[RMDB]
RNA sequence: GGGAACGACUCGAGUAGAGUCGAAAAAGGACCGUCACUGCUAAGCUCGCUGACGGCUACGUUGAGAAGGACAGAGCUUUAGAUGAUGCUAGCGAAGCUGCUGAAGAGUUUAGGACAAAAGCUGAAAUCCUCGACUGAGUUUCGACUCAGUCGAGGAAAAAGAAACAACAACAACAAC
Reactivity to DMS in 0.01 (KOAc 150mM, MgCl2 10mM, bicine 150mM(pH8.5), 24C), signal-to-noise 1, nucleotides 027 to 126: a130g010g010a120c010c000g000u030c000a030c050u000g010c070u010a030a030g010c020u000c000g030c300u000g020a010c020g030g000c070u000a020c110g020u010u000g000a110g010a160a070g000g010a120c030a130g010a130g000c040u000u000u000a050g020a020u000g070a110u000g000c070u000a120g030c030g000a110a050g010c040u000g000c010u000g000a110a040g010a080g070u010u010u000a020g010g010a070c220a100a030a050a020g000c040u000g010a070a100a170
Structure probing data (DMS) for a 177-nucleotide construct. It was measured as part of the RMDB library OK2TST. The RNA was probed in 150 mM KOAc, 10 mM MgCl2 and 150 mM bicine (pH 8.5) at 24 C.